[RMDB]
RNA sequence: GGGAACGACUCGAGUAGAGUCGAAAACUGUGGAAACUGCCCUGAUCUUAGGCUCAUAUUUCAACAGCUUCAACAACUUGCAUUUCAACGACAAGUCCCUAGUGGUAUAUCGGAAAGCAGUGCCUGGACAAUCGGAUCUCCUAAUGCCUCUGUUACCGUUAUAUUUGGUCUUCGGACCAAAUAUAACAAAAGAAACAACAACAACAAC
Reactivity to 2A3 in 0.01 (KOAc 150mM, MgCl2 10mM, bicine 150mM(pH8.5), 24C), signal-to-noise 4, nucleotides 027 to 156: c030u040g000u050g090g020a040a080a050c040u070g020c000c010c030u050g060a150u070c040u090u150a080g020g000c050u030c070a130u130a130u140u090u090c100a090a080c020a040g030c020u090u090c040a090a110c010a070a030c040u020u060g010c020a150u060u060u170c090a140a050c080g130a100c030a080a070g080u090c010c010c010u040a040g030u080g110g050u040a060u010a030u110c050g010g030a100a000a000g020c020a000g020u030g030c020c020u040g010g020a020c040a020a080u040c030g040g050a070u030c020u020c040c020u080a100a050u080g020c000c010u050c030u020g080u110u080a050c040c040
Reactivity to DMS in 0.01 (KOAc 150mM, MgCl2 10mM, bicine 150mM(pH8.5), 24C), signal-to-noise 1, nucleotides 027 to 156: c000u000g020u000g010g010a040a050a070c040u000g030c070c040c020u000g000a100u000c030u000u000a070g030g020c040u010c050a100u010a070u000u000u000c010a070a070c090a050g010c010u000u000c030a050a090c020a070a060c000u000u030g020c000a190u000u010u010c040a050a100c040g020a050c010a030a130g020u000c020c010c010u000a160g060u000g020g000u000a080u000a090u000c010g040g000a050a060a200g010c010a130g010u000g020c030c020u010g000g010a070c080a080a070u000c050g010g030a130u000c000u000c000c010u010a080a110u010g010c000c010u000c020u000g010u000u000a170c100c080

Chemical mapping of a 207-nucleotide RNA with 2A3 and DMS. The 2A3 profile rests on 2,107 reads. The RNA was probed in 150 mM KOAc, 10 mM MgCl2 and 150 mM bicine (pH 8.5) at 24 C. The DMS profile rests on 2,191 reads.